[RMDB]
RNA sequence: GGGAACGACUCGAGUAGAGUCGAAAAAAAUAUCAAUCUGAGAUUUGGGCAGGGACAAACAUAAAAACUAUAUCAACAGGUAUCAGAAUAAUCAACUCAGCAUCCUAGCUUUGAGUGCUUGCCCCCUCAGAACUCAGUAUGCUGUCUCUAAUACCUACGCGAUUAAAUAGUUCGCUAUUUAAUCGCGAAAAGAAACAACAACAACAAC
Reactivity to 2A3 in 0.01 (KOAc 150mM, MgCl2 10mM, bicine 150mM(pH8.5), 24C), signal-to-noise 1, nucleotides 027 to 156: a020a020a020u220a030u060c070a120a040u000c030u020g030a000g030a080u180u020u230g000g000g000c010a020g060g020g070a120c040a030a260a040c060a000u300a100a130a000a040a060c050u030a060u040a010u180c000a000a100c000a080g000g020u000a020u090c070a020g060a060a020u140a190a020u180c030a000a100c000u010c100a010g000c000a060u060c030c060u010a000g010c030u040u060u110g050a100g030u120g050c020u050u000g010c000c020c000c000c000u000c000a000g000a020a020c010u010c020a030g000u020a040u050g000c010u040g000u130c000u000c070u180a040a060u050a060c040c000u150a040